[RMDB]
RNA sequence: GGGAACGACUCGAGUAGAGUCGAAAACAUUGAUUCGUCAAUGCUGUCGCGUACUACUAAUCGAGGAUCACCAGUCCGGAAUUGACGCUCCCAAAUAGGAGCGUCGGAGAUGGACAGGUGGGAGAUUAGUAUCGCUGUCUAGGCAGUUCGCUGCCAAGUAUUCGACCUACUUCGGUAGGUCGAAUACAAAAGAAACAACAACAACAAC
Reactivity to 2A3 in 0.01 (KOAc 150mM, MgCl2 10mM, bicine 150mM(pH8.5), 24C), signal-to-noise 1, nucleotides 027 to 156: c010a000u010u010g000a010u070u140c270g100u090c080a050a010u080g020c130u130g120u210c100g010c030g030u130a060c030u000a010c000u000a030a000u000c010g080a210g040g010a070u010c000a010c010c000a020g000u000c000c020g070g020a010a050u010u040g000a000c010g010c000u030c000c030c000a130a160a000u300a050g000g000a000g000c000g000u000c000g000g000a030g000a000u030g030g000a030c030a050g000g020u000g000g030g000a020g000a000u000u000a000g000u000a000u300c000g000c010u020g070u030c080u110a070g000g000c010a000g060u050u120c240g030c110u020g010c030c000a000a070